[RMDB]
RNA sequence: GGGAACGACUCGAGUAGAGUCGAAAACACUAAGAGUUCGCUCUUAGUGAAAGGCGACCGUGGACUCGAAAAUAAAAAUAAAAUAAAACGCCGUCCACGGUGAAACCACCUCCUUCGGGAGGUGGAAUCCAAUAAUACUCUUCGGAGUAUUAUUGGAAAAAGAAACAACAACAACAAC
Reactivity to DMS in 0.01 (KOAc 150mM, MgCl2 10mM, bicine 150mM(pH8.5), 24C), signal-to-noise 1, nucleotides 027 to 126: c000a020c000u000a000a020g000a030g000u000u000c270g010c020u000c010u010u000a010g000u000g000a010a100a110g020g050c180g010a020c000c000g040u010g010g010a030c000u000c030g000a040a110a080a030u010a020a010a110a080a120u000a090a030a110a110u010a050a120a180a250c010g000c160c240g000u000c010c030a000c030g000g000u000g010a060a080a120c000c000a000c000c000u000c000c000u010u010c210g000g010g000a010g010g020u010g010g000a050a060
Reactivity to 2A3 in 0.01 (KOAc 150mM, MgCl2 10mM, bicine 150mM(pH8.5), 24C), signal-to-noise 1, nucleotides 027 to 126: c020a000c000u000a020a000g040a000g040u100u150c110g000c100u020c010u010u010a000g010u000g020a090a000a030g080g000c040g060a010c000c010g020u000g000g000a000c010u010c150g060a300a190a010a050u190a040a050a050a040a060u300a050a140a050a010u180a040a200a030a050c000g050c130c060g000u000c010c010a010c020g000g020u010g000a010a000a000c000c000a000c000c000u020c010c010u010u060c160g120g000g010a000g000g000u020g000g020a000a000